[RMDB]
RNA sequence: GGGAACGACUCGAGUAGAGUCGAAAAGAAAAGACCAGAUCUAGGUCGUAAUAGAUCUAAAAAGGACUUCAGUUGUCCGUAAACUGAAAAAGAAGCGCGAUUGGAGCGCGUAAUCCAAUCAAAGAAAGGGAAACAUAUUCUUCGGAAUAUGUUUCCCAAAAGAAACAACAACAACAAC
Reactivity to DMS in 0.01 (KOAc 150mM, MgCl2 10mM, bicine 150mM(pH8.5), 24C), signal-to-noise 2, nucleotides 027 to 126: g000a200a130a160a090g020a070c000c020a080g030a090u020c030u000a000g000g000u010c090g020u060a050a110u060a090g030a000u000c030u020a040a040a050a170a100g020g020a120c090u010u000c040a080g000u000u000g030u000c110c040g020u020a100a030a040c020u030g030a000a080a130a090a110g000a120a060g000c020g010c030g000a030u000u000g000g010a040g030c000g020c020g010u040a030a010u000c000c000a010a000u040c040a070a030a140g000a000a160a160
Conditions: 150 mM KOAc, 10 mM MgCl2 and 150 mM bicine (pH 8.5), 24 C. Structure probing data (DMS) for a 177-nucleotide construct. Values cover nucleotides 27 to 126. The data come from the RNA Mapping Database (RMDB), library OK1LIB.